[RMDB]
RNA sequence: GGGAACGACUCGAGUAGAGUCGAAAAUUUAGGGUUCACUCCUGGCAAUAAAGAAUUUACAAAGAGCUACUCAGGACCAGUUGUUAAGAGCUCUGUGUGUGUGUGUGUGUGUGUGAGUGUACAUGCCACCUAUCUGGAGAUUCGUCUCCAGAUAGGUAAAAGAAACAACAACAACAAC
Reactivity to DMS in 0.01 (KOAc 150mM, MgCl2 10mM, bicine 150mM(pH8.5), 24C), signal-to-noise 7, nucleotides 027 to 126: u030u020u020a090g010g010g000u010u000c040a060c050u010c000c020u010g000g010c050a110a090u040a060a100a120g000a130a080u010u030u020a090c140a090a070a050g000a030g010c020u000a080c060u000c070a070g010g000a110c080c090a130g010u000u000g000u000u000a120a100g000a090g010c010u000c000u000g000u000g000u010g000u000g020u000g010u000g000u000g000u010g000u000g000u020g020u000g000a090g030u000g000u020a040c080a080u000g010c120c090
Reactivity to 2A3 in 0.01 (KOAc 150mM, MgCl2 10mM, bicine 150mM(pH8.5), 24C), signal-to-noise 4, nucleotides 027 to 126: u110u090u090a110g030g000g000u030u040c020a020c040u020c000c010u000g030g010c040a030a050u130a190a180a040g160a080a150u100u120u070a100c080a100a110a000g040a000g000c020u070a080c010u040c070a030g020g080a070c010c040a040g000u020u010g020u020u080a130a040g030a020g040c010u020c020u020g010u010g000u000g000u000g000u000g000u000g000u010g000u000g000u020g010u000g000u000g020a060g030u080g040u040a040c020a040u100g010c010c000